The record gives the reactivity of an RNA of 207 nucleotides to 2A3 and DMS. The 2A3 profile rests on 1,321 reads. The reactions ran in a buffer of 150 mM KOAc, 10 mM MgCl2 and 150 mM bicine (pH 8.5), at 24 C. Source: RMDB library M2RFPK, as collected in RNAgym.
RNA sequence: GGGAACGACUCGAGUAGAGUCGAAAAUUACUCUUGUUAGGUGAAAGUUGAUGGUCGCCGAGCCAGUCCGUACAUCCAAAAAGGACUCGAUGUAGUAGGAAGUCGAGAGCCUAUGAGAGUUAGAGUCAUGCCUAUUUUGUGUUCGCACAAAAUAGAACAACCAGAUCUGGUUCGCCAGAUCUGGUUGAAAAGAAACAACAACAACAAC
Reactivity to 2A3 in 0.01 (KOAc 150mM, MgCl2 10mM, bicine 150mM(pH8.5), 24C), signal-to-noise 3, nucleotides 027 to 156: u100u040a040c000u020c000u020u060g080u120u080a040g020g040u070g040a160a130a070g080u120u120g020a070u040g020g050u080c080g040c210c030g020a010g010c020c030a030g130u010c020c010g020u040a050c000a070u000c040c030a040a070a070a020a050g050g010a030c000u000c020g030a050u080g010u060a080g040u040a050g030g130a130a030g000u020c020g000a010g000a020g100c000c010u020a030u040g030a050g010a000g020u020u040a030g020a020g060u030c070a030u160g090c000c010u010a000u010u000u000u000g030u000g020u010u100c240g050c070a000c000a000a000a000a000u010a000g010a050a070
Reactivity to DMS in 0.01 (KOAc 150mM, MgCl2 10mM, bicine 150mM(pH8.5), 24C), signal-to-noise 1, nucleotides 027 to 156: u000u000a030c000u000c010u000u000g060u010u000a050g060g040u000g010a030a100a090g010u000u000g020a180u000g080g030u000c030g030c020c010g000a110g000c020c000a130g020u010c010c030g000u000a140c060a180u000c150c060a040a060a060a150a240g000g040a110c000u000c030g010a070u000g000u000a190g070u000a100g010g000a040a240g010u000c030g000a180g000a300g000c000c010u000a080u000g000a100g000a080g010u000u000a060g000a180g030u030c030a080u000g000c020c010u000a010u000u020u000u010g040u000g010u010u000c300g030c030a060c030a010a000a010a000u010a000g020a050a080